[RMDB]
RNA sequence: GGGAACGACUCGAGUAGAGUCGAAAAAUUGGACCAGAAGGAUGCAACCUGUCUGAUGGGGAGGUCCAUGGCAACUCAAAAAUCCACCCCGGGAGAGUCCAUCACCAAGUUCUAUAGCACAGCCCCACCGGAGGUACCGAUUCGUCGGUACCUCCGGAAAAGAAACAACAACAACAAC
Reactivity to 2A3 in 0.01 (KOAc 150mM, MgCl2 10mM, bicine 150mM(pH8.5), 24C), signal-to-noise 1, nucleotides 027 to 126: a010u080u050g000g000a000c020c030a010g050a010a040g100g030a010u180g120c010a080a140c030c000u110g130u020c050u070g050a060u200g040g000g000g000a030g000g010u010c010c000a000u030g040g000c030a000a090c030u000c100a090a000a000a000a000u000c020c020a000c000c060c000c010g000g070g000a170g000a000g030u000c000c000a060u040c010a040c030c010a110a000g070u120u000c070u080a020u190a160g020c100a020c030a050g040c000c000c000c020a000